[RMDB]
RNA sequence: GGGAACGACUCGAGUAGAGUCGAAAAAUCAAAGCUGUUCAAGUUCCACGCAAAUCCUUGGAACAUAAUCUUGUUUUCAAAGUGUGCAAGAAGUGCGCCGAGCGUUUGUGGGGUAAGCGCUUUAGCGACGAUAUACGUCCUUCGGGACGUAUAUCGUAAAAGAAACAACAACAACAAC
Reactivity to DMS in 0.01 (KOAc 150mM, MgCl2 10mM, bicine 150mM(pH8.5), 24C), signal-to-noise 5, nucleotides 027 to 126: a110u050c100a050a060a150g020c040u020g000u030u010c120a100a180g010u030u000c000c010a060c000g020c010a020a020a010u020c300c000u000u000g020g010a040a080c010a020u000a060a090u010c010u000u010g000u000u010u020u010c220a060a060a090g010u010g030u010g010c020a000a030g010a040a210g000u010g010c300g000c000c010g010a010g020c250g020u000u000u010g010u000g000g000g000g010u020a070a080g010c050g010c040u000u000u010a090g010c080g000
Reactivity to 2A3 in 0.01 (KOAc 150mM, MgCl2 10mM, bicine 150mM(pH8.5), 24C), signal-to-noise 5, nucleotides 027 to 126: a000u190c090a080a060a000g030c060u070g080u140u110c080a080a020g020u080u030c010c000a050c030g010c020a010a030a030u050c010c000u010u010g020g000a030a020c020a000u080a090a050u040c010u020u020g050u080u130u070u030c140a210a250a110g190u230g040u050g130c000a010a000g000a030a020g030u020g000c040g000c010c000g000a000g010c040g010u010u020u010g020u010g000g030g000g020u070a030a040g050c010g000c030u050u010u070a040g020c020g010